[RMDB]
RNA sequence: GGGAACGACUCGAGUAGAGUCGAAAAACGUGCUAAAACGCUAAUUAGAAUGUUCAACGAGUUUGAGGAUUUUUACCUCGAAGUUCAACCUACCCCAAUGGCUGAACAAAAGAUAGUCAAUGACUUUCUAUUCAAAGAGUCAAUCAAAGAGGGUGUACAGACUAGACGGAUUCGUCCGUCUAGUCUGAAAAGAAACAACAACAACAAC
Reactivity to DMS in 0.01 (KOAc 150mM, MgCl2 10mM, bicine 150mM(pH8.5), 24C), signal-to-noise 1, nucleotides 027 to 156: a010c030g020u010g070c090u010a120a040a100a060c000g010c000u000a080a180u000u000a000g020a110a110u000g030u000u010c080a050a080c090g000a070g000u040u000u000g000a070g000g020a080u000u000u010u000u000a120c000c010u000c000g010a070a140g030u000u020c010a010a010c000c020u000a030c050c000c020c020a140a160u010g000g020c010u000g000a050a080c030a040a030a060a140g010a110u000a110g050u000c020a130a180u000g020a030c000u000u000u000c000u030a130u010u000c200a060a080a050g040a030g000u020c000a060a090u000c080a020a060a080g000a100g020g000g000u000g050u000a110
Reactivity to 2A3 in 0.01 (KOAc 150mM, MgCl2 10mM, bicine 150mM(pH8.5), 24C), signal-to-noise 2, nucleotides 027 to 156: a000c030g030u100g020c020u060a050a020a140a010c060g040c030u040a010a080u040u010a000g020a070a020u090g050u150u110c060a070a060c060g020a040g050u010u010u060g030a010g000g060a090u190u170u040u060u240a080c010c000u010c000g030a100a000g010u010u030c010a030a020c020c000u070a080c000c000c000c070a020a070u090g000g000c000u010g000a050a030c040a020a060a010a030g050a040u050a000g020u020c050a220a060u150g010a010c000u060u060u000c010u080a170u120u100c080a050a290a040g020a020g020u010c030a070a100u090c060a120a050a010g120a060g020g020g040u080g030u110a060
The record gives the reactivity of an RNA of 207 nucleotides to DMS and 2A3. It was measured as part of the RMDB library OK3TST. For DMS the reverse transcriptase was MarathonRT. The DMS profile rests on 1,917 reads. Conditions: 150 mM KOAc, 10 mM MgCl2 and 150 mM bicine (pH 8.5), 24 C.